RNA sequence: GGGAACGACUCGAGUAGAGUCGAAAACUCUUGUUAGCUGAAAGUUGAUGGUCGCCGUGUCAGUCCAUGCCUUUGAAAACAGUUCUAUGUAGUAGGGAGUCGAGAACCUAUGAGAGUUAGAACUUGCUAUGCCUUGGACUCUUCGGAGUCCAAGGAACAUCUAUCCUUACUUCGGUAAGGAUAGAUGAAAAGAAACAACAACAACAAC
Reactivity to DMS in 0.01 (KOAc 150mM, MgCl2 10mM, bicine 150mM(pH8.5), 24C), signal-to-noise 5, nucleotides 027 to 156: c030u000c020u000u010g010u000u000a080g020c010u000g010a080a080a140g010u000u000g020a110u000g020g030u000c020g040c020c040g030u000g010u000c040a100g010u010c050c050a080u000g010c030c020u000u000u010g000a100a080a060a050c030a050g010u000u000c020u000a070u000g010u000a300g020u000a040g020g000g010a120g020u000c150g000a260g000a090a130c010c010u010a030u010g010a260g010a180g010u000u000a030g010a030a060c020u000u000g020c020u000a090u000g010c000c000u000u000g010g000a030c000u010c010u000u010c300g050g010a020g000u000c010c000a000a000g000g000a010a040
Reactivity to 2A3 in 0.01 (KOAc 150mM, MgCl2 10mM, bicine 150mM(pH8.5), 24C), signal-to-noise 3, nucleotides 027 to 156: c020u030c030u030u070g070u090u090a050g000c010u040g080a090a070a030g070u090u080g040a060u060g000g030u030c030g000c020c010g050u050g020u080c030a010g030u030c030c020a030u070g060c020c030u080u100u120g110a080a070a010a010c030a020g000u020u000c010u010a040u120g030u040a060g010u000a010g030g010g060a040g030u050c040g030a030g030a200a050c010c000u010a020u050g060a110g020a020g080u040u040a010g010a000a020c000u010u010g000c020u060a060u170g040c000c000u000u000g000g000a010c000u000c020u000u060c190g090g000a010g000u000c000c000a000a000g000g000a000a000

Source information:
Chemical mapping of a 207-nucleotide RNA with DMS and 2A3. The reactions ran in a buffer of 150 mM KOAc, 10 mM MgCl2 and 150 mM bicine (pH 8.5), at 24 C. Reactivities are given for positions 27 through 156. For 2A3 the reverse transcriptase was SuperScript II with manganese. For DMS, 20,146 sequencing reads were counted.